[RMDB]
RNA sequence: GGGAACGACUCGAGUAGAGUCGAAAAGAUAUGGAGUAGAACGGACAUGAAGGCUUCGGAAACGAAGUGGCCUUCAACAGCCGUCUACUCCUAAGUCAAAAGAUCCAAGAGUUCGCUCUUGGAUCAAGUGUUCAGUGUAGUUCGCUACACUGAACACAAAAGAAACAACAACAACAAC
Reactivity to 2A3 in 0.01 (KOAc 150mM, MgCl2 10mM, bicine 150mM(pH8.5), 24C), signal-to-noise 2, nucleotides 027 to 126: g040a000u010a010u120g000g000a000g000u000a000g010a300a040c040g010g050a060c140a300u180g010a000a040g030g000c010u000u030c020g030g020a040a080a020c040g010a040a020g100u250g300g110c010c000u000u000c030a060a110c090a090g060c010c000g010u000c000u000a000c000u010c000c000u000a010a000g000u000c000a010a040a070a300g010a000u000c000c010a030a000g030a000g040u200u240c300g090c200u000c000u010u000g000g000a000u000c000a000a000
Reactivity to DMS in 0.01 (KOAc 150mM, MgCl2 10mM, bicine 150mM(pH8.5), 24C), signal-to-noise 2, nucleotides 027 to 126: g000a000u010a150u040g020g010a050g010u000a000g040a140a030c000g000g010a080c110a220u010g010a010a010g000g010c020u010u000c010g030g000a040a080a040c020g010a040a130g020u020g000g010c300c000u000u000c000a120a210c300a200g020c000c020g000u000c000u000a000c010u000c010c000u010a010a050g010u000c030a160a090a100a080g010a010u000c010c010a000a000g020a050g010u000u040c300g000c000u000c010u000u000g000g000a000u000c010a000a040
Chemical mapping of a 177-nucleotide RNA with 2A3 and DMS. DMS adducts were read by reverse transcription with MarathonRT. For 2A3 the reverse transcriptase was SuperScript II with manganese. Conditions: 150 mM KOAc, 10 mM MgCl2 and 150 mM bicine (pH 8.5), 24 C.